[RMDB]
RNA sequence: GGGAACGACUCGAGUAGAGUCGAAAAGGGGAUGAUCGGUUUCGACGACGGUCGUAGGUUCAGGAGAAGCGGGUCGAGGAUGCGCAGUCAUCUCGUCAACGCUCUGCGCGAACCAAUAGGUGCCGAUAACACUCGCACCGACUUCGCCCUCGCCGCCGGGGAAUUAAAACUUCGGUUUUAAUUCCCCAAAAGAAACAACAACAACAAC
Reactivity to 2A3 in 0.01 (KOAc 150mM, MgCl2 10mM, bicine 150mM(pH8.5), 24C), signal-to-noise 1, nucleotides 027 to 156: g000g020g000g000a040u030g020a110u030c060g020g020u070u220u110c010g000a040c030g020a030c000g030g000u040c040g030u040a080g000g040u000u010c010a010g000g110a030g060a080a000g020c010g000g010g000u020c020g000a000g030g170a030u010g000c140g020c060a060g130u250c000a010u000c000u010c000g030u040c020a170a110c010g000c000u000c010u110g110c060g030c110g030a000a010c010c000a000a020u180a160g100g040u130g010c050c030g000a030u120a110a070c180a040c060u010c020g000c000a000c040c010g030a000c000u050u000c020g180c000c010c010u020c010g080c030c000g050c040c050